[RMDB]
RNA sequence: GGGAACGACUCGAGUAGAGUCGAAAAAACAUAACAUCACACGCACGCAUGAUUAAGGCGUCAACAAACCCUUGGAAAUAUCCUGAUAAGAAUCCUAAAAUAGAUCCAAUAAGUACAGAAACAAAUAGCCAAGGAAGAUAUUCGUAUCUUCCUUGGCAAAAGAAACAACAACAACAAC
Reactivity to DMS in 0.01 (KOAc 150mM, MgCl2 10mM, bicine 150mM(pH8.5), 24C), signal-to-noise 1, nucleotides 027 to 126: a000a040c090a000u010a030a090c030a010u000c060a100c140a080c200g010c070a040c030g000c040a060u000g010a110u000u020a030a020g000g020c060g060u000c050a100a060c160a110a080a080c030c010c040u010u010g000g000a100a110a040u020a040u030c030c030u010g000a150u000a020a110g040a090a080u000c000c010u000a050a120a020a080u000a010g000a090u000c030c020a040a090u010a040a060g030u000a110c100a040g020a070a070a070c100a040a090a060u000a070